Chemical mapping of a 207-nucleotide RNA with 2A3. Reactivities are given for positions 27 through 156.
[RMDB]
RNA sequence: GGGAACGACUCGAGUAGAGUCGAAAAGGUUUAAUCGGGUCUACACCUCUCCUUACCGAUUAAACCAGCGAAAGCGACAACAAGGAGAGGAUAGGAGUGCAUGCGUCAUAACCUCCCCAUAGCAUGCACUCCAGCGAGAGCGAACAACGGGGGAGGAGAUACGUCGUGGGUUCGCCCACGACGUAUCAAAAGAAACAACAACAACAAC
Reactivity to 2A3 in 0.01 (KOAc 150mM, MgCl2 10mM, bicine 150mM(pH8.5), 24C), signal-to-noise 1, nucleotides 027 to 156: g050g000u000u000u000a000a000u010c010g000g010g040u050c070u060a050c050a170c050c000u000c000u020c000c000u000u000a010c000c000g000a000u000u000a000a000a000c000c000a010g020c030g120a120a040a030g090c040g110a070c090a190a010c020a000a010g000g000a010g000a000g000g000a000u020a000g020g000a000g000u000g000c000a000u010g010c020g030u130c070a150u070a280a220c000c000u000c000c000c000c000a010u060a020g000c000a000u000g000c000a000c000u000c000c000a000g020c000g030a130g000a000g030c020g020a020a020c050a030a050c260g090g000g000g000g000a000g000g000a020